Chemical mapping of a 177-nucleotide RNA with DMS and 2A3.
[RMDB]
RNA sequence: GGGAACGACUCGAGUAGAGUCGAAAACAACGGGAAGCUAUGCGUCUUCCUGCUUUGGUCACCAUGCCUGAAUCCGAUCGAGUUGGAUCUCCGGAUUUGGAGCGUGACAGUGAAGUGAAGGGCGAUGGCAGUUCAGUAGUUUCGACUACUGAACUGCAAAAGAAACAACAACAACAAC
Reactivity to DMS in 0.01 (KOAc 150mM, MgCl2 10mM, bicine 150mM(pH8.5), 24C), signal-to-noise 2, nucleotides 027 to 126: c040a110a130c060g000g000g000a060a060g020c080u010a070u010g000c210g020u000c010u000u000c020c010u010g030c100u000u010u000g000g000u010c010a060c030c130a080u030g000c010c010u020g000a010a030u010c010c000g020a160u010c110g010a050g000u010u020g020g010a120u010c020u000c010c010g010g010a060u000u000u020g000g010a040g050c090g010u000g000a040c050a140g020u010g020a070a020g000u000g020a170a110g000g000g000c030g000a100u000g030
Reactivity to 2A3 in 0.01 (KOAc 150mM, MgCl2 10mM, bicine 150mM(pH8.5), 24C), signal-to-noise 2, nucleotides 027 to 126: c010a010a020c020g060g010g000a050a020g020c070u130a060u300g110c090g110u020c010u000u030c020c000u000g020c040u160u060u080g080g000u020c010a020c060c000a060u090g000c000c000u030g010a000a000u000c010c000g030a150u200c090g020a050g110u090u140g300g150a300u050c000u000c010c000g050g000a030u040u000u100g010g000a080g000c030g000u020g000a010c030a070g030u040g100a050a030g030u040g110a040a040g040g030g000c030g070a090u110g110

The RNA was probed in 150 mM KOAc, 10 mM MgCl2 and 150 mM bicine (pH 8.5) at 24 C. For 2A3 the reverse transcriptase was SuperScript II with manganese. The data come from the RNA Mapping Database (RMDB), library OK2TRN.